[RMDB]
Structure probing data (2A3 and DMS) for a 170-nucleotide construct. Conditions: 150 mM KOAc, 10 mM MgCl2 and 150 mM bicine (pH 8.5), 24 C. Values are in units of 0.01, from 0 to 300, in steps of 10.

RNA sequence: GGGAACGACUCGAGUAGAGUCGAAAAGAGUGAGGCUUAUCCCGGAGUGCCGGGCAAGUCCCCCCAUGCCCGUUCCACGGCUCCCUUCCAGAAGGGCGGGGGUGGCCUGGAGCGUCGGGCCCCAGCAACGGUAGUCACUUCGGUGACUACAAAAGAAACAACAACAACAAC
Reactivity to 2A3 in 0.01 (KOAc 150mM, MgCl2 10mM, bicine 150mM(pH8.5), 24C), signal-to-noise 9, nucleotides 027 to 129: g140a020g080u220g030a070g030g020c020u050u060a080u210c010c010c030g010g010a210g030u200g180c020c010g000g000g020c030a030a010g060u070c000c010c000c000c000c000a020u080g010c010c010c000g020u040u000c020c010a030c070g010g000c000u110c010c000c000u040u030c020c010a120g050a300a130g250g040g000c040g010g010g000g010g040u130g020g000c000c000u010g000g010a020g010c050g110u090c040g020g010g000c000c010c000c000a060g020c030a050a060c070g050
Reactivity to DMS in 0.01 (KOAc 150mM, MgCl2 10mM, bicine 150mM(pH8.5), 24C), signal-to-noise 8, nucleotides 027 to 129: g000a020g030u040g030a000g000g020c060u000u030a040u040c010c000c010g000g000a220g050u040g030c010c000g030g000g000c300a020a020g000u040c020c010c010c000c010c040a080u010g010c010c000c000g000u040u010c000c000a000c140g020g030c000u000c030c010c010u040u030c000c020a230g070a160a130g050g030g020c110g030g000g000g040g000u020g000g000c000c030u000g020g020a030g020c040g040u050c080g010g000g010c030c010c020c000a100g020c170a120a080c170g000